[RMDB]
RNA sequence: GGGAACGACUCGAGUAGAGUCGAAAAUUUAAAUAACUGGAGGGAGACUGUGCCUUUCACAGGUCCACCUUGGACUCAGGCUGAAAGUACAGCUAUGCAUAUUUGGAGAGAGACUGUGCCUUUCACAGGUACAGAGUACGUUCGCGUACUCUGUACCAAAAGAAACAACAACAACAAC
Reactivity to 2A3 in 0.01 (KOAc 150mM, MgCl2 10mM, bicine 150mM(pH8.5), 24C), signal-to-noise 2, nucleotides 027 to 126: u010u000u010a020a110a070u110a050a100c060u040g080g020a020g040g030g010a070g050a030c000u010g000u030g050c000c020u030u070u060c060a060c000a010g080g000u000c010c010a070c030c030u020u210g000g020a000c000u010c100a060g180g000c100u020g030a050a030a010g030u030a020c000a000g000c000u040a040u100g080c010a070u070a110u220u170u110g070g000a130g000a000g030a000g020a040c030u020g020u040g020c000c020u070u080u040c050a070c010a120
Reactivity to DMS in 0.01 (KOAc 150mM, MgCl2 10mM, bicine 150mM(pH8.5), 24C), signal-to-noise 2, nucleotides 027 to 126: u010u000u020a030a100a110u010a060a100c070u010g000g010a070g010g010g000a040g000a080c010u030g000u000g010c150c040u030u000u010c020a070c050a110g010g010u000c010c010a120c260c260u010u020g000g020a050c000u020c110a070g040g020c140u000g000a050a070a070g010u020a030c030a000g000c050u000a050u000g010c080a050u000a080u010u000u000g010g010a100g000a050g000a050g000a050c090u000g000u000g000c030c020u000u000u000c050a030c270a050
This 177-nucleotide RNA was probed chemically with 2A3 and DMS. Values cover nucleotides 27 to 126. For 2A3, 1,311 sequencing reads were counted. For DMS the reverse transcriptase was MarathonRT. For DMS, 1,276 sequencing reads were counted. Conditions: 150 mM KOAc, 10 mM MgCl2 and 150 mM bicine (pH 8.5), 24 C.